[RMDB]
RNA sequence: GGGAACGACUCGAGUAGAGUCGAAAAAAAGAGUGCUUGAAAUUGCCGGGAGGGAAGCGGAUGGGGGCUGGCGAUGCGCCCCGGUCGUAUGCGGAACGGCUUCUGCUGGUCCGCCGAUCGGCUCGGGCCCCUCUGAUACGUUCGCGUAUCAGAGGGGAAAAGAAACAACAACAACAAC
Reactivity to DMS in 0.01 (KOAc 150mM, MgCl2 10mM, bicine 150mM(pH8.5), 24C), signal-to-noise 1, nucleotides 027 to 126: a100a040a010g000a100g000u010g000c030u010u020g030a040a090a110u010u010g010c020c000g010g050g000a210g020g000g020a050a090g000c160g010g000a070u000g000g000g000g000g000c030u010g010g000c070g020a080u010g020c050g040c010c000c000c000g000g000u000c000g020u070a140u040g000c000g010g000a010a010c030g010g000c000u010u040c270u010g020c020u020g020g000u000c020c000g000c000c030g000a080u010c010g000g000c030u010c180g000g000g000
Reactivity to 2A3 in 0.01 (KOAc 150mM, MgCl2 10mM, bicine 150mM(pH8.5), 24C), signal-to-noise 3, nucleotides 027 to 126: a000a000a000g150a000g020u180g020c070u080u020g050a030a090a140u160u100g040c040c030g010g020g070a250g000g000g040a020a030g040c060g050g000a080u050g060g010g010g040g080c040u030g030g000c020g060a100u100g080c010g020c050c010c000c020g000g010u000c000g010u060a050u170g000c010g000g000a010a010c000g020g000c000u140u090c040u300g000c010u000g020g010u000c000c000g000c000c010g040a030u010c000g000g000c050u080c020g010g000g000